Notes: The record gives the reactivity of an RNA of 177 nucleotides to DMS and 2A3. 2A3 is a SHAPE reagent: it acylates the 2'-hydroxyl of flexible nucleotides of all four kinds. DMS adducts were read by reverse transcription with MarathonRT. 2A3 adducts were read by reverse transcription with SuperScript II with manganese. Reactivities are rounded to 0.1 and cut off at 0 and 3.

[RMDB]
RNA sequence: GGGAACGACUCGAGUAGAGUCGAAAACCAUUCCAUGUGCGUUCCUCCCAGAACUGCACACCUGGUCAAAGAGGAAGGCCUUUCCUGAUAAAGGAGGACCAUUCUCAGUCAAGGGUAUGUGAGUACCGCUUAAUAAAGACUUCGGUCUUUAUUAAGCAAAAGAAACAACAACAACAAC
Reactivity to DMS in 0.01 (KOAc 150mM, MgCl2 10mM, bicine 150mM(pH8.5), 24C), signal-to-noise 6, nucleotides 027 to 126: c020c020a170u010u010c040c020a080u000g020u000g010c010g010u000u000c000c050u000c030c020c030a200g010a030a030c030u010g030c030a010c010a060c110c110u000g000g020u000c110a060a090a110g000a010g010g010a010a040g010g010c010c000u000u010u010c000c000u000g000a160u020a080a150a020g000g000a020g010g000a020c000c010a090u000u000c000u000c000a100g000u010c120a100a100g000g010g010u000a020u000g000u010g000a130g010u000a050c120c080
Reactivity to 2A3 in 0.01 (KOAc 150mM, MgCl2 10mM, bicine 150mM(pH8.5), 24C), signal-to-noise 6, nucleotides 027 to 126: c010c000a010u110u010c030c020a060u070g030u030g050c020g020u010u000c000c020u010c010c010c010a000g010a030a020c060u140g010c000a000c000a010c010c030u060g000g030u070c080a160a070a060g010a010g010g010a010a040g020g030c000c000u150u210u060c000c010u030g060a120u150a300a100a010g000g010a000g000g020a040c010c000a050u040u000c000u000c010a040g080u070c050a080a070g060g010g020u070a050u080g140u070g050a050g040u030a050c040c060